[RMDB]
RNA sequence: GGGAACGACUCGAGUAGAGUCGAAAAAUUAUGAAUAUGAGCGAUAUUACAUUCUUGAUGUUGGUGGACGAAGGGGUGAAUUAUCUGGAUGGUUUGAUCUCGGCCCUCGUUUGUCUUAUUUUUGUAUCGAUCCGAAUGCGCGGGAGAUGAUACCUAACGAGAAUACAUAGUUCGCUAUGUAUUCUCGAAAAGAAACAACAACAACAAC
Reactivity to DMS in 0.01 (KOAc 150mM, MgCl2 10mM, bicine 150mM(pH8.5), 24C), signal-to-noise 1, nucleotides 027 to 156: a130u000u000a070u000g000a080a060u000a080u010g000a030g030c020g030a190u000a160u000u000a040c030a070u000u000c010u000u010g010a080u000g050u020u010g000g010u010g020g010a090c050g010a080a080g020g010g000g010u000g000a040a080u010u020a050u000c060u000g010g010a110u010g020g000u000u010u010g010a040u020c080u000c060g010g020c000c020c050u010c070g010u010u000u000g010u020c010u000u000a190u000u000u000u010u000g000u000a100u000c010g010a170u000c010c000g000a040a060u000g020c020g040c080g010g010g010a050g010a110u020g000a060u000a040c030c020u020a060a160
Reactivity to 2A3 in 0.01 (KOAc 150mM, MgCl2 10mM, bicine 150mM(pH8.5), 24C), signal-to-noise 3, nucleotides 027 to 156: a000u230u120a090u080g030a030a040u080a040u190g020a050g050c060g030a030u030a030u100u090a070c030a050u070u100c040u120u100g070a080u060g020u120u030g030g010u040g010g020a030c080g060a060a010g040g000g030g060u050g040a070a090u090u070a040u120c040u060g060g010a030u040g060g040u040u120u170g050a020u020c040u030c100g080g000c000c010c000u020c000g010u000u050u010g020u000c010u010u110a090u040u090u010u030u090g010u010a000u010c010g010a030u020c020c010g070a180a130u070g040c200g040c030g070g040g010a040g010a020u100g000a010u060a080c020c040u000a090a040

Chemical mapping of a 207-nucleotide RNA with DMS and 2A3. Values are in units of 0.01, from 0 to 300, in steps of 10. 2A3 adducts were read by reverse transcription with SuperScript II with manganese. For DMS, 2,717 sequencing reads were counted. The data come from the RNA Mapping Database (RMDB), library OK3TST.